[RMDB]
RNA sequence: GGGAACGACUCGAGUAGAGUCGAAAAUACCGUCUUCUCACCGACGGUUUCAAUCCAUAGCUUCACGUUGUGUAGCGUAGGUGGAAGGUAUCGUGUGGUGUAUAAACACCACAUAGUCUCUUAGGGGUCAAGCUGAUAAACUUCGGUUUAUCAGCAAUACCAUGUCGGAAUUCGUUCCGACAUGGUAAAAAGAAACAACAACAACAAC
Reactivity to 2A3 in 0.01 (KOAc 150mM, MgCl2 10mM, bicine 150mM(pH8.5), 24C), signal-to-noise 3, nucleotides 027 to 156: u100a010c000c000g000u000c040u120u030c080u010c020a020c050c020g070a020c040g010g020u000u110u070c100a030a050u050c010c020a070u040a060g020c010u070u070c010a000c070g300u270u220g000u070g020u030a010g020c010g070u010a120g010g010u040g000g010a030a010g070g010u090a060u150c060g000u000g010u000g060g000u010g070u030a050u110a300a230a040c000a000c000c000a000c000a010u010a020g020u010c000u010c010u100u100a040g000g030g000g000u030c070a100a030g020c000u000g000a000u000a000a000a000c000u010u030c120g020g000u000u000u000a000u000c000a010g000c010a000a000
Reactivity to DMS in 0.01 (KOAc 150mM, MgCl2 10mM, bicine 150mM(pH8.5), 24C), signal-to-noise 2, nucleotides 027 to 156: u000a020c000c010g000u020c000u000u010c070u010c090a050c040c030g030a050c000g040g030u000u000u000c070a080a220u000c030c010a160u000a120g030c030u000u040c030a080c050g030u000u000g030u000g000u000a080g000c040g040u010a080g030g070u000g010g010a050a070g020g010u000a070u000c100g010u000g020u020g000g010u000g030u010a160u000a130a150a100c010a040c000c010a000c010a000u000a020g020u000c020u000c020u000u010a150g000g000g020g020u000c080a100a110g000c010u000g010a050u000a000a020a000c010u000u000c300g030g040u000u000u000a010u000c000a010g000c010a000a010